[RMDB]
RNA sequence: GGGAACGACUCGAGUAGAGUCGAAAAGUCGCAGAACGCCGCCGUUGUCGGCUUGUUGCGCGCGCGUACCCAAUCCAGCGCUUCCGCACCGGUGACGUCCUCGAGCCAUAGGUAGGGGUCAGCGCCGUCAAAGACAGCUAUUCGUAGCUGUCUUUGAAAAAGAAACAACAACAACAAC
Reactivity to DMS in 0.01 (KOAc 150mM, MgCl2 10mM, bicine 150mM(pH8.5), 24C), signal-to-noise 4, nucleotides 027 to 126: g010u020c000g010c020a040g020a090a050c160g000c020c000g010c050c050g000u000u000g000u010c010g000g020c060u000u000g010u020u010g010c010g020c020g020c040g000c030g000u000a120c030c010c050a110a100u040c100c110a080g010c020g010c020u000u000c050c040g000c120a090c140c010g020g010u000g010a110c070g020u020c010c020u010c030g010a130g020c030c040a150u010a050g000g030u010a220g000g000g000g000u010c040a070g030c010g010c010c020g030
Reactivity to 2A3 in 0.01 (KOAc 150mM, MgCl2 10mM, bicine 150mM(pH8.5), 24C), signal-to-noise 4, nucleotides 027 to 126: g050u040c000g000c030a010g030a110a020c070g010c010c000g000c000c040g070u040u080g050u060c000g020g020c000u030u090g110u050u020g020c010g000c000g000c010g010c000g040u120a120c000c010c020a010a020u100c050c060a030g000c010g020c000u100u030c040c030g100c040a050c010c030g000g040u030g050a080c010g030u030c010c000u010c020g040a070g040c020c020a170u120a150g000g030u020a030g010g020g000g020u030c050a070g010c000g000c020c010g030